[RMDB]
Chemical mapping of a 177-nucleotide RNA with 2A3 and DMS. The data come from the RNA Mapping Database (RMDB), library OK2TRN. 2A3 adducts were read by reverse transcription with SuperScript II with manganese.
RNA sequence: GGGAACGACUCGAGUAGAGUCGAAAAGUCAGCACAUAGCCGGGACAGAUGGAAUUGGCGGUGAUUUUUGCGGUGGCAAGCUCCAGCGCCAGCGUCUUGGUGAAGCCGACAAUGCCGUGCUUGGCGACCUGACCGCACUAUUCGUAGUGCGGUCAGGAAAAGAAACAACAACAACAAC
Reactivity to 2A3 in 0.01 (KOAc 150mM, MgCl2 10mM, bicine 150mM(pH8.5), 24C), signal-to-noise 2, nucleotides 027 to 126: g030u000c010a010g040c010a020c040a060u110a070g000c010c000g030g070g030a030c050a090g160a080u210g080g040a070a060u060u010g010g000c080g100g040u100g010a070u040u080u190u180u050g040c030g210g150u210g200g000c060a030a030g000c020u090c050c030a080g060c020g080c070c010a030g040c000g050u000c000u070u020g090g000u060g080a100a050g040c060c040g040a050c000a060a020u130g010c060c020g020u050g070c020u190u140g010g000c010g010a050
Reactivity to DMS in 0.01 (KOAc 150mM, MgCl2 10mM, bicine 150mM(pH8.5), 24C), signal-to-noise 1, nucleotides 027 to 126: g000u000c020a010g020c040a040c110a080u000a190g000c000c020g010g000g000a050c000a110g030a120u000g030g010a080a080u010u000g010g050c020g010g000u000g020a070u000u000u010u010u010g010c000g040g000u000g000g020c030a040a040g000c080u020c100c030a090g000c080g020c020c000a020g000c040g000u000c040u010u020g010g000u000g010a120a210g000c010c050g030a040c080a100a050u010g010c060c050g000u010g010c130u000u020g000g010c000g010a140